Source: RMDB library M2PK50, as collected in RNAgym. Structure probing data (2A3 and DMS) for a 177-nucleotide construct. For DMS the reverse transcriptase was MarathonRT. Values cover nucleotides 27 to 126.
RNA sequence: GGGAACGACUCGAGUAGAGUCGAAAAGCAUCUUGCUUCGGCAAGAUGCAAAUAACGGUCAGUGCUUGCAGCUAGUCGUAAAUGCUAACAGGCCUUACGCUAAAACGAAUGCGUUCGCGCAUUCGAACAUUUCUACCUCCUUCGGGAGGUAGAAAUGAAAAGAAACAACAACAACAAC
Reactivity to 2A3 in 0.01 (KOAc 150mM, MgCl2 10mM, bicine 150mM(pH8.5), 24C), signal-to-noise 2, nucleotides 027 to 126: g000c000a000u000c000u010u000g000c000u030u040c130g090g000c000a000a010g000a000u000g000c010a000a000a000u040a030a000c030g060g040u010c020a020g000u010g210c010u070u040g000c010a020g000c030u070a040g100u100c060g050u050a070a120a170u180g020c010u030a190a010c000a030g010g000c000c000u000u040a040c040g000c120u110a000a090a020a110c020g000a000a000u000g010c020g020u000u020c210g000c000g020c040a010u000u010c000g010a030a000
Reactivity to DMS in 0.01 (KOAc 150mM, MgCl2 10mM, bicine 150mM(pH8.5), 24C), signal-to-noise 2, nucleotides 027 to 126: g020c000a020u000c010u000u000g000c000u000u010c160g000g020c000a000a010g000a010u000g010c000a010a020a060u000a080a070c060g030g000u010c040a040g000u000g010c020u000u010g000c160a060g040c040u000a080g020u000c150g030u010a070a050a080u010g020c000u000a080a090c100a030g000g010c010c070u060u000a110c070g020c090u000a020a070a100a100c050g010a020a000u000g010c020g030u000u010c210g030c010g010c000a020u000u000c000g000a060a120